[RMDB]
RNA sequence: GGGAACGACUCGAGUAGAGUCGAAAAGAUAUGGACGACUCCGAUAAGUCCCAUUCGGAAACGAAUGUGGACUUUUGACGGAGAAGUCCUAAGUCAAAAUCGAACACCGCUUCGGCGGUGUUCGAAAGUCUAAUCUAUGGUUCGCCAUAGAUUAGACAAAAGAAACAACAACAACAAC
Reactivity to DMS in 0.01 (KOAc 150mM, MgCl2 10mM, bicine 150mM(pH8.5), 24C), signal-to-noise 2, nucleotides 027 to 126: g010a050u010a200u010g000g000a020c000g000a300c000u000c000c000g000a150u010a040a020g010u000c000c010c000a020u010u000c000g000g000a090a060a060c010g000a000a000u000g020u020g050g010a010c000u000u000u000u000g020a240c030g000g010a020g000a030a300g000u000c000c000u000a000a050g000u010c010a060a040a090a170u000c010g020a000a010c020a010c000c000g020c020u000u010c250g030g040c000g000g000u000g000u000u000c000g000a000a020a090
Reactivity to 2A3 in 0.01 (KOAc 150mM, MgCl2 10mM, bicine 150mM(pH8.5), 24C), signal-to-noise 2, nucleotides 027 to 126: g010a010u030a010u060g000g000a000c010g010a010c020u000c000c000g150a270u100a300a000g010u000c000c000c010a000u000u000c000g010g020a090a010a010c010g000a030a000u050g060u300g020g000a020c000u000u050u070u130g050a020c000g000g000a000g000a000a010g000u000c000c000u010a040a000g010u000c010a010a050a020a300u060c000g020a010a010c000a010c020c000g030c020u040u080c130g100g000c010g040g060u000g000u010u000c000g000a020a000a000